Conditions: 150 mM KOAc, 10 mM MgCl2 and 150 mM bicine (pH 8.5), 24 C. The record gives the reactivity of an RNA of 177 nucleotides to DMS and 2A3. DMS adducts were read by reverse transcription with MarathonRT. The DMS profile rests on 1,305 reads. 2A3 adducts were read by reverse transcription with SuperScript II with manganese.

RNA sequence: GGGAACGACUCGAGUAGAGUCGAAAAGAUAUGGAACAAGAACUACAUCGUGAGGCGCAACAGCAUAAUGAAAGUCGGAAACGACUUUCAUUAUGACAUGCGUGUAGCGAUGCUUGUUCCUAAGUCAUCUUAGACGUCAGUUCGCUGACGUCUAAGAAAAAGAAACAACAACAACAAC
Reactivity to DMS in 0.01 (KOAc 150mM, MgCl2 10mM, bicine 150mM(pH8.5), 24C), signal-to-noise 2, nucleotides 027 to 126: g010a050u000a300u000g010g010a010a010c000a030a000g010a140a050c080u010a300c010a010u000c000g020u000g010a170g010g020c010g000c000a010a120c260a300g000c000a000u000a000a000u000g020a010a020a010g000u010c000g010g010a100a120a220c010g020a020c000u010u000u000c000a000u000u010a000u010g000a070c100a100u010g010c010g000u000g000u010a300g010c000g010a010u000g010c000u010u030g020u000u030c020c000u000a000a100g000u010c020a150
Reactivity to 2A3 in 0.01 (KOAc 150mM, MgCl2 10mM, bicine 150mM(pH8.5), 24C), signal-to-noise 1, nucleotides 027 to 126: g020a030u050a050u210g020g010a020a000c000a030a000g020a060a080c210u260a070c300a000u010c010g050u000g020a140g160g170c030g000c030a110a130c080a270g080c020a000u000a000a000u000g000a000a000a000g000u000c000g000g110a080a100a060c000g020a000c000u000u000u000c000a000u000u000a010u000g000a020c020a020u060g000c000g110u270g010u030a000g000c000g000a000u000g020c000u000u000g000u010u000c000c000u000a050a000g040u010c000a040